This 207-nucleotide RNA was probed chemically with 2A3 and DMS. The RNA was probed in 150 mM KOAc, 10 mM MgCl2 and 150 mM bicine (pH 8.5) at 24 C. 2A3 adducts were read by reverse transcription with SuperScript II with manganese.

RNA sequence: GGGAACGACUCGAGUAGAGUCGAAAAGCCUACAGGUUCGCCUGUAGGCAAAAACCGUAGGGUGUACUAAGCUACGCUUCGUUGAAAUUCGAAAGAGUGGAGAAGCGGUCAGCUUAGGCACCCUAAACGGAAAAAACGGAAUGUUCGCAUUCCGUAAGUUAUAGUUUUGUUUCGACAAAACUAUAACAAAAGAAACAACAACAACAAC
Reactivity to 2A3 in 0.01 (KOAc 150mM, MgCl2 10mM, bicine 150mM(pH8.5), 24C), signal-to-noise 1, nucleotides 027 to 156: g010c000c000u020a000c020a010g060g080u040u110c170g110c060c000u010g010u010a000g000g000c000a010a010a010a010a010c000c000g010u000a020g000g000g030u020g000u110a300c000u000a000a000g000c010u010a010c010g000c000u000u020c000g080u080u040g000a010a010a010u000u030c030g040a040a090a150g000a040g000u030g030g020a030g010a020a000g010c010g010g050u060c070a010g000c000u000u000a010g000g000c000a000c010c000c000u000a000a020a000c000g030g040a110a040a030a020a000a000c010g000g010a000a000u010g040u070u100c240g000c030a000u000u000c000c000g000u010a060a000
Reactivity to DMS in 0.01 (KOAc 150mM, MgCl2 10mM, bicine 150mM(pH8.5), 24C), signal-to-noise 1, nucleotides 027 to 156: g000c000c020u000a010c000a030g000g010u000u010c300g040c000c000u000g050u010a000g030g060c020a000a020a040a050a030c000c010g030u020a040g010g020g000u010g000u000a080c010u010a000a000g000c010u010a080c030g000c010u000u000c010g030u010u010g020a210a160a050u010u020c050g010a250a140a220g000a040g010u000g030g010a160g020a060a030g000c000g020g000u000c150a020g000c000u000u000a020g000g020c000a010c000c000c000u000a010a000a020c020g000g010a030a050a140a110a110a070c000g020g020a010a010u000g040u000u000c300g030c010a070u000u020c000c010g020u000a000a050